[RMDB]
RNA sequence: GGGAACGACUCGAGUAGAGUCGAAAAUCUAAUAAACAUUUACGAUACUUUUAUGUAUGUAUACGCACGUAGCCUGCUUAAACAUAGUCAUCGUGGAGGUCCGCGUCCGUCGUAUGCUGUACAGGCGCCACUAGCCUAUGUUCGCAUAGGCUAGUGGAAAAGAAACAACAACAACAAC
Reactivity to 2A3 in 0.01 (KOAc 150mM, MgCl2 10mM, bicine 150mM(pH8.5), 24C), signal-to-noise 6, nucleotides 027 to 126: u010c010u050a060a030u160a140a210a060c110a120u100u190u150a080c080g050a040u070a070c080u100u110u170u140a130u260g080u030a030u020g060u010a040u040a050c060g010c020a040c080g040u040a020g020c010c020u070g020c040u100u150a070a040a030c050a040u100a050g070u100c050a020u010c080g050u040g030g070a070g010g080u040c060c020g030c010g050u020c060c030g010u020c000g030u060a040u120g020c010u000g000u040a050c030a030g020g000c040g000
Reactivity to DMS in 0.01 (KOAc 150mM, MgCl2 10mM, bicine 150mM(pH8.5), 24C), signal-to-noise 3, nucleotides 027 to 126: u050c030u000a110a040u020a130a190a100c150a060u010u010u000a060c090g010a020u020a000c000u010u030u050u010a080u070g010u000a040u010g000u000a040u010a060c170g030c080a060c060g000u030a070g000c030c030u000g000c070u010u050a030a050a080c200a080u010a020g010u020c060a040u000c010g020u010g000g010a070g010g020u000c040c060g010c000g000u010c090c030g050u000c020g050u030a020u010g010c000u010g000u000a060c070a040g000g010c130g030
The record gives the reactivity of an RNA of 177 nucleotides to 2A3 and DMS. For DMS the reverse transcriptase was MarathonRT.